[RMDB]
RNA sequence: GGGAACGACUCGAGUAGAGUCGAAAAAAAAAGGACGACGACGACAGGAACAGCAGCAGCAGCUGACUAACGGACAACAGCAUACGACAGCAAGGUGGUGGAAGGUAACUAACACAACACAAAAAAACGUCCUAACUAUGUUCGCAUAGUUAGGACGAAAAGAAACAACAACAACAAC
Reactivity to DMS in 0.01 (KOAc 150mM, MgCl2 10mM, bicine 150mM(pH8.5), 24C), signal-to-noise 1, nucleotides 027 to 126: a010a080a060a140a070g010g030a110c040g000a050c080g000a080c070g020a040c060a080g010g000a130a020c120a010g000c040a080g000c020a030g000c130a060g010c000u010g020a110c050u000a060a080c090g010g030a080c110a040a020c140a040g040c030a030u000a170c040g010a030c080a040g000c090a020a070g010g010u020g010g050u030g000g000a090a000g000g030u020a030a040c150u000a000a040c110a010c090a010a010c060a010c180a020a010a030a100a020a070a050